[RMDB]
The record gives the reactivity of an RNA of 177 nucleotides to 2A3 and DMS.
RNA sequence: GGGAACGACUCGAGUAGAGUCGAAAACUUGCAAGAUAAGACUGGCGACUUUAUGUCUACAAUUAUUACUUCCUGCCAAACUGCUGUUAGUAAGCUUCUAGAUACAUGUUUUGAAGCUACAGAAGCACAAUUAUAGUAACUUCGGUUACUAUAAUUGAAAAGAAACAACAACAACAAC
Reactivity to 2A3 in 0.01 (KOAc 150mM, MgCl2 10mM, bicine 150mM(pH8.5), 24C), signal-to-noise 8, nucleotides 027 to 126: c020u020u090g010c040a040a020g010a140u070a040a040g030a050c040u020g020g020c020g020a020c010u100u160u140a100u230g010u000c000u030a030c020a050a080u100u060a050u080u050a100c010u030u020c000c010u010g040c020c010a060a090a060c060u050g000c000u020g030u130u040a040g000u030a120a050g010c000u000u000c020u030a020g010a050u070a130c130a120u190g050u040u060u010u040g010a000a000g000c000u000a010c000a030g070a060a000g010c010a010
Reactivity to DMS in 0.01 (KOAc 150mM, MgCl2 10mM, bicine 150mM(pH8.5), 24C), signal-to-noise 7, nucleotides 027 to 126: c090u000u000g010c050a070a060g010a060u000a030a050g000a070c070u000g020g010c090g010a080c030u000u000u010a060u020g010u000c010u000a090c050a030a050u010u000a080u010u000a080c120u000u000c020c010u000g010c050c180a060a090a110c230u000g020c010u000g000u010u010a080g010u000a040a070g020c000u000u000c000u000a030g010a060u000a070c260a080u010g010u000u010u000u000g010a030a020g010c010u000a030c020a070g010a130a030g010c030a140

Reactivities are given for positions 27 through 126. It was measured as part of the RMDB library 15KREP. 2A3 adducts were read by reverse transcription with SuperScript II with manganese.